Notes:
An RNA of 177 nucleotides, treated with 2A3 and DMS and read out base by base. As a SHAPE reagent, 2A3 marks flexible, mostly unpaired nucleotides at the ribose 2'-OH. The RNA was probed in 150 mM KOAc, 10 mM MgCl2 and 150 mM bicine (pH 8.5) at 24 C. Values are in units of 0.01, from 0 to 300, in steps of 10.
RNA sequence: GGGAACGACUCGAGUAGAGUCGAAAACACGAUCCAUCAACGUCCUAGUGGUCGGAGCAGCCUUCGUAUUCGUCGUGACGAUGCUUUUCAUCUGACGAAGAACGAUCACCGCAGACAACCGAACUCCUGUUUACUCCGGGUUCGCCCGGAGUAAACAAAAAGAAACAACAACAACAAC
Reactivity to 2A3 in 0.01 (KOAc 150mM, MgCl2 10mM, bicine 150mM(pH8.5), 24C), signal-to-noise 3, nucleotides 027 to 126: c040a000c030g000a080u060c040c000a090u070c050a070a080c050g050u020c020c000u010a020g040u030g040g010u060c010g040g000a060g030c040a010g010c000c030u060u010c010g000u060a030u000u020c020g000u000c050g060u130g070a050c080g010a000u100g120c210u080u120u100u110c020a040u010c060u070g010a020c030g010a010a000g010a060a010c020g000a000u020c010a010c020c000g010c040a020g040a030c010a000a030c000c000g020a010a000c010u020c000c000
Reactivity to DMS in 0.01 (KOAc 150mM, MgCl2 10mM, bicine 150mM(pH8.5), 24C), signal-to-noise 2, nucleotides 027 to 126: c100a080c080g000a030u010c000c050a140u020c050a050a100c060g000u000c050c010u010a080g000u000g010g050u000c010g020g000a140g000c180a050g030c130c120u020u020c000g020u000a260u010u000c000g010u000c030g000u080g030a030c090g000a060u000g000c300u080u080u000u000c000a090u000c000u020g000a000c000g000a080a040g000a000a010c000g000a050u030c190a030c060c080g000c050a040g020a090c010a120a120c060c000g050a020a010c010u000c020c020